The data come from the RNA Mapping Database (RMDB), library OK1LIB.
This 177-nucleotide RNA was probed chemically with 2A3 and DMS.
Reactivities are given for positions 27 through 126.
For 2A3, 2,150 sequencing reads were counted.
The RNA was probed in 150 mM KOAc, 10 mM MgCl2 and 150 mM bicine (pH 8.5) at 24 C.
RNA sequence: GGGAACGACUCGAGUAGAGUCGAAAACGGCGUGGCGCCGGGGCGAGCGGCGGCAGUGAACGCGUUUGUGGUUCUCAUCGGAUAGGCAAAAAGUGUCCGCGCGACUCGAGCGUAUGCCACACCCGGCCAUGCUAAUCACCUUCGGGUGAUUAGCAUGAAAAGAAACAACAACAACAAC
Reactivity to 2A3 in 0.01 (KOAc 150mM, MgCl2 10mM, bicine 150mM(pH8.5), 24C), signal-to-noise 3, nucleotides 027 to 126: c010g050g010c040g020u040g080g020c010g030c000c000g000g010g030g020c030g020a050g010c010g030g000c000g050g010c050a020g020u030g110a040a010c030g040c070g160u030u150u160g150u060g090g060u100u020c070u020c030a100u120c060g080g030a050u070a150g160g020c090a050a050a040a060a080g100u060g010u070c010c000g050c000g000c000g110a070c000u000c000g000a050g020c000g020u040a020u130g010c050c000a040c000a020c000c000c000g000g020c030
Reactivity to DMS in 0.01 (KOAc 150mM, MgCl2 10mM, bicine 150mM(pH8.5), 24C), signal-to-noise 2, nucleotides 027 to 126: c100g000g040c120g000u020g010g000c000g040c000c030g000g000g000g000c000g020a080g020c000g000g000c010g000g000c160a150g000u000g000a040a110c050g000c040g060u060u030u000g000u000g020g040u020u000c050u130c060a100u020c030g000g050a100u010a100g000g020c110a080a050a130a050a100g000u040g000u040c010c000g020c140g020c040g050a030c020u010c020g000a170g000c090g020u000a020u020g000c000c070a150c090a170c040c000c020g000g010c170